An RNA of 207 nucleotides, treated with DMS and 2A3 and read out base by base.
[RMDB]
RNA sequence: GGGAACGACUCGAGUAGAGUCGAAAACGACAUCUUCACAAUCCUCACCGUUCUGUUCGGCAUGCUCUUCAUUGCCGGCUGUGGAGGAGGGUGGACUGGCACGGGUGUGGUAGUCGACAAGAACAUGCAUGAUGCCGGUUAUCGUCCGGUAUCUUGGCCAAGUGUUAGUUUUCGAACUAACACUUGGAAAAGAAACAACAACAACAAC
Reactivity to DMS in 0.01 (KOAc 150mM, MgCl2 10mM, bicine 150mM(pH8.5), 24C), signal-to-noise 2, nucleotides 027 to 156: c050g020a050c020a090u000c020u000u010c070a060c060a100a070u000c010c000u000c010a100c050c040g000u000u010c040u010g010u010u000c000g040g030c020a030u010g020c160u020c000u010u000c090a080u000u010g010c020c020g010g000c050u000g010u000g020g000a080g000g010a030g000g000g070u010g000g000a070c030u010g010g030c020a070c040g000g020g030u010g030u000g020g030u000a040g030u000c020g000a130c080a060a080g000a060a080c030a070u000g010c050a140u000g010a060u010g000c010c010g000g010u000u000a070u000c070g000u010c060c000g010g030u000a020u000c000u000u000g010g030
Reactivity to 2A3 in 0.01 (KOAc 150mM, MgCl2 10mM, bicine 150mM(pH8.5), 24C), signal-to-noise 7, nucleotides 027 to 156: c040g080a020c010a100u050c050u210u090c060a040c050a100a110u030c020c000u030c020a070c020c030g080u180u110c060u070g100u210u170c020g010g000c020a030u050g020c110u060c000u300u230c110a110u080u130g010c000c000g010g000c000u030g020u110g080g050a110g010g030a030g010g020g000u050g010g030a040c060u040g020g030c040a020c070g120g100g000u180g000u040g060g200u030a040g040u030c030g040a050c070a060a030g050a110a060c070a090u200g040c010a040u060g040a010u010g020c000c000g020g010u050u090a220u190c120g120u020c010c010g010g000u010a010u000c000u020u040g050g010
The DMS profile rests on 9,144 reads. It was measured as part of the RMDB library OK3TST. The RNA was probed in 150 mM KOAc, 10 mM MgCl2 and 150 mM bicine (pH 8.5) at 24 C.